Structure probing data (2A3) for a 177-nucleotide construct. The data come from the RNA Mapping Database (RMDB), library OK1LIB. 2A3 adducts were read by reverse transcription with SuperScript II with manganese. Conditions: 150 mM KOAc, 10 mM MgCl2 and 150 mM bicine (pH 8.5), 24 C. Reactivities are given for positions 27 through 126. For 2A3, 619 sequencing reads were counted.
RNA sequence: GGGAACGACUCGAGUAGAGUCGAAAACGUAAUAUUAAGUCAUUAUCUGGUGGACAACGUCAGCGUGCAUACAUUGCAAUGACAAUAGCACAAGAUACUGAAUAUAUUUUGCUAGAUGAACCAUUAAGCGAUGAAUUUCCUUCGGGAAAUUCAUCGCAAAAGAAACAACAACAACAAC
Reactivity to 2A3 in 0.01 (KOAc 150mM, MgCl2 10mM, bicine 150mM(pH8.5), 24C), signal-to-noise 2, nucleotides 027 to 126: c100g040u100a020a000u010a070u180u030a170a030g000u010c040a000u000u030a040u000c000u000g140g000u000g170g000a210c060a020a030c050g010u000c000a030g010c010g170u000g000c040a040u170a240c120a070u160u280g000c010a020a160u020g000a020c000a000a070u060a110g020c000a000c010a020a000g000a010u010a040c010u040g040a020a000u050a000u050a040u120u000u020u060g040c010u010a110g010a200u220g060a080a090c040c020a090u200u120a040a060